[RMDB]
Structure probing data (2A3) for a 177-nucleotide construct. Reactivities are given for positions 27 through 126. 2A3 adducts were read by reverse transcription with SuperScript II with manganese.
RNA sequence: GGGAACGACUCGAGUAGAGUCGAAAAUGACGUCGUUUCGACGACGUCAACAUAAAAUCAGCGGUAAAUAAUUAGGAGGCGUUAGCGCUGAACGCCUCCAUACGAGAGGGCUAUUCGUAGCCCUCAAGGGAAUAGAGAUCUUCGGAUCUCUAUUCCCAAAAGAAACAACAACAACAAC
Reactivity to 2A3 in 0.01 (KOAc 150mM, MgCl2 10mM, bicine 150mM(pH8.5), 24C), signal-to-noise 1, nucleotides 027 to 126: u070g000a000c010g000u000c000g030u000u030u110c120g050a000c010g020a000c010g010u000c000a010a000c000a010u230a100a080a000a100u040c000a000g000c010g130g110u150a070a040a070u060a040a080u070u250a140g000g000a000g000g000c010g020u000u030a090g120c000g020c010u000g000a000a020c000g000c000c000u020c000c000a010u110a000c090g010a090g000a000g020g000g050c010u040a000u050u030c160g080u040a010g000c000c000c000u000c000a000a000